The data come from the RNA Mapping Database (RMDB), library RFM100. Structure probing data (2A3) for a 177-nucleotide construct. Reactivities are given for positions 27 through 126. The reactions ran in a buffer of 150 mM KOAc, 10 mM MgCl2 and 150 mM bicine (pH 8.5), at 24 C.
RNA sequence: GGGAACGACUCGAGUAGAGUCGAAAAGCAGCAGCAGACACGGUUUUGGGUAUCCCCGAAACGGGCUGCGACCGGCGAAGCGAUUCGUUCUCUGCCGCACAACAUUUCCGAGGGGAGACCACCGCAAACUCAACUCUGCGUUCGCGCAGAGUUGAGUAAAAGAAACAACAACAACAAC
Reactivity to 2A3 in 0.01 (KOAc 150mM, MgCl2 10mM, bicine 150mM(pH8.5), 24C), signal-to-noise 1, nucleotides 027 to 126: g000c020a000g000c010a000g000c010a010g070a060c000a040c130g120g010u040u020u020u020g090g020g000u150a180u280c000c000c060c020g000a020a020a020c010g070g020g000c020u000g000c000g010a050c020c020g040g040c020g010a080a000g030c000g080a080u030u040c040g000u030u000c010u020c020u010g040c000c060g000c010a010c040a060a040c040a060u080u180u000c010c000g010a070g000g030g000g000a040g000a000c010c010a000c010c010g100c130a020a020